An RNA of 177 nucleotides, treated with 2A3 and DMS and read out base by base. Values cover nucleotides 27 to 126. For 2A3, 1,187 sequencing reads were counted. For DMS, 1,244 sequencing reads were counted. In probing experiments dimethyl sulfate is read out at A N1 and C N3, which are open when not base-paired. The RNA was probed in 150 mM KOAc, 10 mM MgCl2 and 150 mM bicine (pH 8.5) at 24 C. For 2A3 the reverse transcriptase was SuperScript II with manganese.
RNA sequence: GGGAACGACUCGAGUAGAGUCGAAAAAGUGAGAGCAGCUGGAUCAGAGGACAGUGAACGUCUGCUCAGGAUUACAGUCAUUCAGGCAUACCUAGGAGAUGUCCCUAGGCCCCAGACAUUGCUUGAGCUCGCAGGCAGUAUUCGUACUGCCUGCGAGAAAAGAAACAACAACAACAAC
Reactivity to 2A3 in 0.01 (KOAc 150mM, MgCl2 10mM, bicine 150mM(pH8.5), 24C), signal-to-noise 2, nucleotides 027 to 126: a010g190u090g030a140g040a000g020c040a000g000c000u040g000g020a070u040c020a020g030a050g110g000a020c070a030g050u050g200a120a020c040g010u030c020u040g020c030u030c000a010g150g000a080u130u130a130c010a020g060u000c020a000u110u090c050a020g000g000c010a030u060a080c000c020u000a010g030g020a120g060a170u220g090u190c020c010c000u020a030g000g030c010c010c000c010a040g000a040c060a100u050u040g000c000u000u030g010a010g000
Reactivity to DMS in 0.01 (KOAc 150mM, MgCl2 10mM, bicine 150mM(pH8.5), 24C), signal-to-noise 2, nucleotides 027 to 126: a050g000u000g010a240g010a080g040c030a140g000c030u000g030g000a080u000c070a090g020a130g020g010a110c080a100g010u010g010a090a100c230g030u010c000u000g000c020u010c020a120g000g000a060u000u000a090c100a020g010u000c040a110u000u000c010a020g000g000c060a070u000a070c010c000u000a010g010g000a150g000a180u000g010u010c060c010c000u000a000g000g020c050c000c000c040a210g010a040c170a140u000u010g010c000u000u000g000a010g010